[RMDB]
Annotation: Source: RMDB library TTRDEL, as collected in RNAgym. The record gives the reactivity of an RNA of 177 nucleotides to 2A3 and DMS. 2A3 adducts were read by reverse transcription with SuperScript II with manganese. Reactivities are rounded to 0.1 and cut off at 0 and 3. Conditions: 150 mM KOAc, 10 mM MgCl2 and 150 mM bicine (pH 8.5), 24 C. The DMS profile rests on 1,633 reads.
RNA sequence: GGGAACGACUCGAGUAGAGUCGAAAAGAUAUGGAGUAUAACUGCGCAAAGGUACAUCGGAAACGAUGUAUACUGAACUACGCAGCUAUACUCCUAAGUCAAAGACUUACACUUCGGUGUAAGUCAAGCAACACAAUGAGUUCGCUCAUUGUGUUGCAAAAGAAACAACAACAACAAC
Reactivity to 2A3 in 0.01 (KOAc 150mM, MgCl2 10mM, bicine 150mM(pH8.5), 24C), signal-to-noise 2, nucleotides 027 to 126: g020a000u000a010u040g000g010a000g020u010a010u010a020a000c010u010g030c150g050c220a020a040a030g000g000u010a000c000a010u000c000g000g000a020a020a010c030g030a000u000g050u020a020u160a110c000u010g010a020a030c140u300a170c250g000c000a000g000c000u020a000u000a000c000u000c000c000u000a010a000g000u020c000a000a090a110g000a000c000u000u010a000c010a010c020u050u120c300g210g020u030g000u000a000a000g010u030c010a000a000
Reactivity to DMS in 0.01 (KOAc 150mM, MgCl2 10mM, bicine 150mM(pH8.5), 24C), signal-to-noise 1, nucleotides 027 to 126: g020a010u010a180u000g010g000a020g010u000a000u000a010a020c000u000g020c010g000c220a040a080a080g010g000u000a000c000a000u000c000g000g010a060a030a070c000g030a020u000g000u000a010u000a070c010u000g020a050a100c210u000a060c000g000c000a000g000c000u000a000u000a000c000u000c000c000u000a000a070g000u000c010a060a100a110g000a010c010u000u010a000c000a010c000u000u040c180g030g020u000g000u000a000a020g000u000c020a020a050